The data come from the RNA Mapping Database (RMDB), library M2RFPK. This 207-nucleotide RNA was probed chemically with 2A3 and DMS. Reactivities are rounded to 0.1 and cut off at 0 and 3.

RNA sequence: GGGAACGACUCGAGUAGAGUCGAAAAACGCUUCACAAUGUGCGGCAAAGAAACAUUGUUUAUGCAAGGGCACUUCGCAAUGUGUGCUCAAACAUUGCUUAUUCAAACACGCUUCACAAUGUGCGACAAAACUUCACGGUCUUCGGACCGUGAAGAACUCAAACAAACAGUUCGCUGUUUGUUUGAGAAAAGAAACAACAACAACAAC
Reactivity to 2A3 in 0.01 (KOAc 150mM, MgCl2 10mM, bicine 150mM(pH8.5), 24C), signal-to-noise 7, nucleotides 027 to 156: a000c020g010c030u070u040c010a010c010a020a040u020g000u010g000c010g040g010c070a090a090a070g100a030a090a000c020a020u010u020g060u040u070u060a060u080g040c020a020a060g010g020g000c010a010c020u130u110c110g030c120a090a130u140g020u010g010u010g030c020u020c050a020a040a010c060a040u030u020g010c010u100u090a070u100u120c060a030a060a020c050a020c110g030c010u070u080c040a020c030a090a120u090g010u030g040c020g060a050c080a010a070a030a020c010u000u000c000a000c000g010g010u000c000u030u030c100g110g000a000c000c000g000u000g000a000a000g000a000a000
Reactivity to DMS in 0.01 (KOAc 150mM, MgCl2 10mM, bicine 150mM(pH8.5), 24C), signal-to-noise 2, nucleotides 027 to 156: a000c020g000c020u010u000c040a040c000a010a040u010g050u000g060c070g000g000c000a150a110a090g010a090a050a040c050a060u030u000g030u000u000u000a120u000g000c090a140a300g010g030g020c020a020c000u010u000c270g010c050a120a110u000g030u020g020u000g040c070u000c030a020a100a000c040a020u020u000g010c030u000u010a140u000u000c050a150a120a080c040a090c090g020c050u000u020c070a080c000a050a060u000g000u030g000c020g020a130c010a050a020a030a090c010u000u000c000a000c000g020g000u000c000u000u000c300g030g000a030c000c010g060u000g000a000a010g020a060a080
Record summary: Reactivities are given for positions 27 through 156. The RNA was probed in 150 mM KOAc, 10 mM MgCl2 and 150 mM bicine (pH 8.5) at 24 C.